About this RNA:
The data come from the RNA Mapping Database (RMDB), libraries RFM100 and RFMREP. This 177-nucleotide RNA was probed chemically with 2A3 and DMS. High DMS reactivity at an A or C suggests that its Watson-Crick edge is free. The reactions ran in a buffer of 150 mM KOAc, 10 mM MgCl2 and 150 mM bicine (pH 8.5), at 24 C. Reactivities are given for positions 27 through 126. For 2A3 the reverse transcriptase was SuperScript II with manganese. For DMS, 3,121 sequencing reads were counted.
RNA sequence: GGGAACGACUCGAGUAGAGUCGAAAAAGCUCGCUUACGAGCGAGCAAUAUCAUGCCGAAACAUGACAAUGUCCUUUUUAAAUAAAAGGAGACUGCGUGUGGCCUAUAGACCUGGUACGCCAGGUCAAAUGCUACAGGGGUUCGCCCCUGUAGCAUUAAAAGAAACAACAACAACAAC
Reactivity to 2A3 in 0.01 (KOAc 150mM, MgCl2 10mM, bicine 150mM(pH8.5), 24C), signal-to-noise 5, nucleotides 027 to 126: a000g010c020u010c010g000c010u100u050a090c300g070a010g000c000g000a000g000c000a000a020u110a050u080c140a080u120g030c010c030g120a140a120a000c010a020u020g160a110c030a050a090u120g070u090c000c010u050u030u000u020u080a240a300a210u290a030a010a010a000g040g010a020g010a010c020u030g000c030g010u020g020u030g020g000c010c000u190a180u100a210g000a000c000c000u000g000g010u020a060c220g030c020c000a000g000g000u000c000a000
Reactivity to DMS in 0.01 (KOAc 150mM, MgCl2 10mM, bicine 150mM(pH8.5), 24C), signal-to-noise 2, nucleotides 027 to 126: a090g050c000u000c000g010c030u020u020a120c120g030a030g010c010g020a020g000c020a020a030u020a090u010c050a090u010g020c050c010g030a100a220a060c000a000u010g020a100c010a010a030u040g000u010c000c020u000u000u000u000u030a060a160a130u030a020a000a010a010g000g010a020g010a060c090u000g000c030g000u000g020u000g000g030c010c260u000a080u010a110g000a010c000c000u000g030g010u000a070c240g030c010c010a020g000g000u000c010a000